Structure probing data (DMS and 2A3) for a 170-nucleotide construct. Reactivities are given for positions 27 through 129.
RNA sequence: GGGAACGACUCGAGUAGAGUCGAAAAAUCGGCUCAUCUCGACAAGAGGCGGCGGUCCUCAGUGCUCUUACUCUUUGUUUGUAAAGAGGAGACUGCUGGACUCGCCGCCCAAGUUCGAGAGGGGCCACAAGAGGUGUGUUCGCACACCUCAAAAGAAACAACAACAACAAC
Reactivity to DMS in 0.01 (KOAc 150mM, MgCl2 10mM, bicine 150mM(pH8.5), 24C), signal-to-noise 3, nucleotides 027 to 129: a050u070c080g070g020c000u050c010a040u020c000u010c030g000a050c030a180a090g040a100g000g000c030g000g000c000g020g030u030c010c010u010c020a020g030u060g120c000u000c000u020u080a300c010u020c030u140u020u040g090u080u000u100g100u200a000a000a000g000a020g040g010a020g030a030c010u040g070c140u000g020g000a020c020u000c100g020c030c030g000c000c000c000a010a050g020u000u000c020g040a030g070a020g030g020g020g030c000c020a010c100a000a000
Reactivity to 2A3 in 0.01 (KOAc 150mM, MgCl2 10mM, bicine 150mM(pH8.5), 24C), signal-to-noise 9, nucleotides 027 to 129: a010u120c070g000g000c000u000c010a020u010c000u000c000g010a010c020a040a080g100a110g060g000c010g000g000c010g000g000u000c000c010u000c010a040g010u120g250c010u000c010u060u150a200c000u010c020u040u080u040g240u210u170u220g280u300a010a010a000g010a010g010g000a000g000a000c010u000g030c050u000g000g000a000c030u050c110g000c000c000g010c000c000c010a000a010g000u040u010c000g000a000g000a000g000g000g000g000c010c010a000c000a000a010
The RNA was probed in 150 mM KOAc, 10 mM MgCl2 and 150 mM bicine (pH 8.5) at 24 C.
For DMS, 12,547 sequencing reads were counted.
As a SHAPE reagent, 2A3 marks flexible, mostly unpaired nucleotides at the ribose 2'-OH.
Values are in units of 0.01, from 0 to 300, in steps of 10.